The data come from the RNA Mapping Database (RMDB), library OK2TRN. An RNA of 177 nucleotides, treated with 2A3 and DMS and read out base by base. For DMS, 2,480 sequencing reads were counted.

[RMDB]
RNA sequence: GGGAACGACUCGAGUAGAGUCGAAAAUAUAGUGUGAGGCUGCCGAACCCCCAAUCUACUAUGACUAUCCGCUUCCAAGGGGUCAUCUUUCUCACGGAAGGACUCAUUCUGCCUAAAAACAGCACAGUACUACGGGAAAAUUCGUUUUCCCGUAGUAAAAAGAAACAACAACAACAAC
Reactivity to 2A3 in 0.01 (KOAc 150mM, MgCl2 10mM, bicine 150mM(pH8.5), 24C), signal-to-noise 1, nucleotides 027 to 126: u090a000u050a010g070u040g020u000g080a020g060g020c020u010g000c030c070g100a160a150c020c020c020c000c010a010a020u020c020u050a070c010u030a080u120g010a010c010u030a090u060c010c000g070c100u050u020c020c010a090a020g050g010g020g000u020c000a030u040c000u060u080u020c080u000c040a020c030g020g000a000a000g050g000a050c020u020c030a010u080u010c060u010g030c000c010u040a120a050a030a010a010c000a000g080c040a090c060a010g130
Reactivity to DMS in 0.01 (KOAc 150mM, MgCl2 10mM, bicine 150mM(pH8.5), 24C), signal-to-noise 3, nucleotides 027 to 126: u010a070u010a120g010u000g000u000g000a070g010g000c030u000g040c050c010g030a090a240c050c020c010c010c040a090a080u010c070u000a100c090u010a040u000g000a080c070u010a100u000c040c020g010c080u010u000c100c090a080a100g000g000g000g020u000c050a080u010c040u000u000u000c020u010c120a080c150g000g010a020a050g010g000a070c030u010c030a070u010u000c030u000g010c030c020u000a030a050a060a060a130c060a080g020c170a050c150a090g010